[RMDB]
RNA sequence: GGGAACGACUCGAGUAGAGUCGAAAAACUGCCUGUUUCGACAGGCAGUAGUCUUCUUCGCGCAACCGCCGAGUCGUUCCCGCGGUUGCGUGAAGUAGUUUGAUAUGAUCUUAUUCGUAAGAUCAAAUAGUACAUUCUGUUUCGACAGAAUGUACUAAAAAGAAACAACAACAACAAC
Reactivity to 2A3 in 0.01 (KOAc 150mM, MgCl2 10mM, bicine 150mM(pH8.5), 24C), signal-to-noise 2, nucleotides 027 to 126: a000c000u000g000c000c000u040g050u000u080u100c220g080a010c000a000g020g020c010a000g010u000a000g000u040c010u060u010c010u000u010c010g000c010g000c010a000a000c000c000g020c070c200g110a030g090u000c010g010u000u010c010c000c020g000c000g010g000u010u010g000c000g000u000g000a000a010g000u020a000g020u000u190u230g180a120u090a090u250g000a000u000c000u030u010a050u080u140c240g040u060a010a000g000a000u020c010a000a030a020
Reactivity to DMS in 0.01 (KOAc 150mM, MgCl2 10mM, bicine 150mM(pH8.5), 24C), signal-to-noise 4, nucleotides 027 to 126: a030c000u000g000c000c000u000g000u000u000u020c170g010a050c000a010g000g000c000a000g000u000a020g010u000c010u010u000c010u000u000c000g010c020g000c010a010a010c010c000g010c000c210g000a140g000u000c000g000u000u010c010c000c010g030c000g000g000u000u000g010c000g040u000g010a010a010g010u010a010g010u000u000u000g010a140u010a130u000g010a010u000c000u000u000a030u000u010c180g010u000a010a010g000a010u000c000a030a070a110

This 177-nucleotide RNA was probed chemically with 2A3 and DMS. The reactions ran in a buffer of 150 mM KOAc, 10 mM MgCl2 and 150 mM bicine (pH 8.5), at 24 C. Values are in units of 0.01, from 0 to 300, in steps of 10. Source: RMDB library M2PK50, as collected in RNAgym. The 2A3 profile rests on 2,536 reads.